[RMDB]
RNA sequence: GGGAACGACUCGAGUAGAGUCGAAAAGACUGCGUGCACUCGAGACGAUAUCGAGCCGGAAAUUAAUCGAUAAUGUCUCGUGUAGUGGAUACGAUCCGGCAAGUAUCGACUACUUGUGCUCGUAGGAACUCGGCAGGGAGUUCGCUCCCUGCCGAGUAAAAGAAACAACAACAACAAC
Reactivity to 2A3 in 0.01 (KOAc 150mM, MgCl2 10mM, bicine 150mM(pH8.5), 24C), signal-to-noise 1, nucleotides 027 to 126: g070a000c000u000g000c000g000u000g000c000a010c000u000c010g000a000g000a000c000g020a010u010a000u000c000g000a020g000c000c000g040g150a070a210a120u190u190a090a190u090c010g000a000u000a050a100u200g000u000c000u020c000g050u010g000u040a000g010u000g110g000a000u000a020c010g010a020u000c020c000g030g010c030a070a000g000u000a000u010c000g070a000c000u010a010c000u030u100g000u000g000c000u010c010g000u000a000g000g000a010
The data come from the RNA Mapping Database (RMDB), library OK1LIB. This 177-nucleotide RNA was probed chemically with 2A3. Values cover nucleotides 27 to 126.